[RMDB]
RNA sequence: GGGAACGACUCGAGUAGAGUCGAAAACUUGGAAAAACAGGGUAUAUAAACCAUUGACUCUUAUUAUUUCACUAAAAUUAGAUUAGGUACUUGCACAAUUCACUGCACAGAGUAAUCCUCCAAUAUGUCUAGGAAUAUCUUUCGAGAUAUUCCUAGAAAAAGAAACAACAACAACAAC
Reactivity to DMS in 0.01 (KOAc 150mM, MgCl2 10mM, bicine 150mM(pH8.5), 24C), signal-to-noise 5, nucleotides 027 to 126: c030u000u000g010g000a050a060a040a130a130c180a040g000g000g020u000a080u030a100u010a090a100a110c190c110a080u010u010g000a050c030u000c010u000u000a060u030u000a060u000u000u010c030a050c090u040a040a050a070a070u030u030a070g010a060u010u010a040g010g020u020a030c030u010u000g000c050a020c080a040a080u010u020c090a060c070u000g010c020a020c070a080g010a080g000u010a040a050u010c010c010u010c050c050a050a040u030a050u020g010
Reactivity to 2A3 in 0.01 (KOAc 150mM, MgCl2 10mM, bicine 150mM(pH8.5), 24C), signal-to-noise 9, nucleotides 027 to 126: c000u020u050g040g030a040a040a020a020a020c040a050g040g000g070u020a060u020a030u070a110a160a050c040c020a060u020u140g030a030c010u000c010u040u020a060u100u030a060u030u240u080c040a050c080u140a090a050a090a170u150u100a050g070a130u080u060a030g020g050u030a040c010u020u050g010c020a010c030a070a180u090u070c020a040c050u040g000c010a020c010a050g050a010g030u020a030a040u020c000c020u000c020c010a040a030u110a080u200g080
This 177-nucleotide RNA was probed chemically with DMS and 2A3. It was measured as part of the RMDB libraries RFM100 and RFMREP. For 2A3 the reverse transcriptase was SuperScript II with manganese. Reactivities are given for positions 27 through 126. The reactions ran in a buffer of 150 mM KOAc, 10 mM MgCl2 and 150 mM bicine (pH 8.5), at 24 C.